[RMDB]
RNA sequence: GGGAACGACUCGAGUAGAGUCGAAAACCUACGCUUCGGCGUAGGAAAAAAGCGUACUACGUUCGGGUGGUGGAGCGGCACUUCCCAAAUAGGAAGUGAUCGCGAUGAAACCAUCUCUAGCGUGACGUAUCGCAAAAAAGGCUAGUUCGCUAGCCAAUCUGUAUUCGAACUUCGGUUCGAAUACAGAAAAAGAAACAACAACAACAAC
Reactivity to 2A3 in 0.01 (KOAc 150mM, MgCl2 10mM, bicine 150mM(pH8.5), 24C), signal-to-noise 1, nucleotides 027 to 156: c000c000u000a010c010g000c020u010u120c300g150g000c000g000u000a000g000g000a130a000a000a000a000a070g000c010g020u040a020c000u040a030c010g010u010u010c000g020g010g020u010g000g010u010g000g010a030g010c000g000g020c000a000c000u000u020c000c040c000a100a300a100u180a030g000g000a000a010g000u000g060a300u090c020g000c000g010a070u000g000a000a000a000c000c010a050u040c070u010c010u000a010g000c010g000u010g040a000c140g000u030a030u300c130g000c020a100a120a000a000a020a000g020g000c010u000a010g000u160u120c170g030c040u000a000g000c000c000a010a030